[RMDB]
RNA sequence: GGGAACGACUCGAGUAGAGUCGAAAAUUCUUUUUUCCAUUAUGUUUUGUUUCUGAGUUUAACCAAAUCACUCAUUAUUUCAAGGAGGAAUUAGGUUAUGUCAGUACAAUUAGAAGUUAAAGAAAGACCAUGGAUAAUUGUUCGCAAUUAUCCAUGGAAAAGAAACAACAACAACAAC
Reactivity to 2A3 in 0.01 (KOAc 150mM, MgCl2 10mM, bicine 150mM(pH8.5), 24C), signal-to-noise 1, nucleotides 027 to 126: u000u030c000u020u150u000u000u020u010c030c020a120u210u180a170u230g160u020u100u020u020g090u050u300u030c020u010g070a120g070u010u060u030a010a000c000c000a040a050a050u080c030a050c040u000c000a010u010u150a180u040u230u060c070a090a000g100g000a000g020g060a020a060u030u040a060g000g010u000u000a010u000g030u000c010a010g010u020a000c010a010a010u010u000a060g040a180a000g090u040u140a090a020a050g020a020a020a000g010a010
Reactivity to DMS in 0.01 (KOAc 150mM, MgCl2 10mM, bicine 150mM(pH8.5), 24C), signal-to-noise 2, nucleotides 027 to 126: u000u000c000u000u000u000u000u000u000c020c050a170u010u000a110u000g000u010u000u000u000g010u010u000u000c000u000g020a010g010u010u010u010a010a010c000c000a050a040a060u000c150a210c000u030c000a040u000u000a120u000u020u020c240a080a110g000g000a030g010g000a150a040u000u000a090g030g000u000u000a020u000g000u000c000a010g010u000a020c000a000a030u010u010a080g010a090a060g000u000u000a040a030a070g000a070a050a120g010a150